Conditions: 150 mM KOAc, 10 mM MgCl2 and 150 mM bicine (pH 8.5), 24 C. This 207-nucleotide RNA was probed chemically with 2A3 and DMS. DMS (dimethyl sulfate) methylates the pairing face of unpaired adenines and cytosines. For DMS the reverse transcriptase was MarathonRT. It was measured as part of the RMDB library OK3TST.
RNA sequence: GGGAACGACUCGAGUAGAGUCGAAAAUCGCUGGAAUCGACCGCUACCGCCUCUAGGGAUCUGACCUCGUCCCUGACAACGCCUACCGCAGAGCUCGCCUCCGGAUCAUCGCUUCUGGGCGACGACGUCAAGAACCAGCUCGACGAGCUCAAGUUGGAUUCCUAAAGGUAUUCGUACCUUUAGGAAUAAAAGAAACAACAACAACAAC
Reactivity to 2A3 in 0.01 (KOAc 150mM, MgCl2 10mM, bicine 150mM(pH8.5), 24C), signal-to-noise 4, nucleotides 027 to 156: u100c040g010c030u060g020g030a060a080u070c040g040a060c030c020g010c060u090a060c020c020g040c010c030u040c050u100a040g030g000g020a050u030c030u040g090a100c020c020u030c040g030u020c010c000c020u030g030a030c060a110a000c050g040c010c010u090a070c030c050g010c090a030g010a010g030c040u050c060g020c030c000u050c020c020g030g020a050u090c040a030u050c030g000c070u140u050c060u130g000g030g040c050g010a040c030g020a030c020g000u030c040a060a030g010a040a070c010c010a020g000c030u020c010g040a040c010g000a010g020c000u020c040a020a020g010u050u020g020g000
Reactivity to DMS in 0.01 (KOAc 150mM, MgCl2 10mM, bicine 150mM(pH8.5), 24C), signal-to-noise 3, nucleotides 027 to 156: u010c050g020c030u000g020g000a140a180u010c020g030a070c040c010g000c040u000a070c040c040g000c000c030u000c030u010a060g010g020g030a060u000c040u000g020a090c030c030u000c040g010u010c010c010c000u030g030a120c030a090a080c040g000c050c020u000a080c050c050g010c050a130g010a080g020c020u000c040g020c020c010u000c080c030g000g010a110u010c040a080u000c020g010c000u010u000c110u010g030g040g000c010g020a020c030g010a060c000g020u000c050a070a080g020a100a220c030c020a070g000c030u000c020g020a020c020g010a190g010c030u010c010a020a210g010u000u010g010g010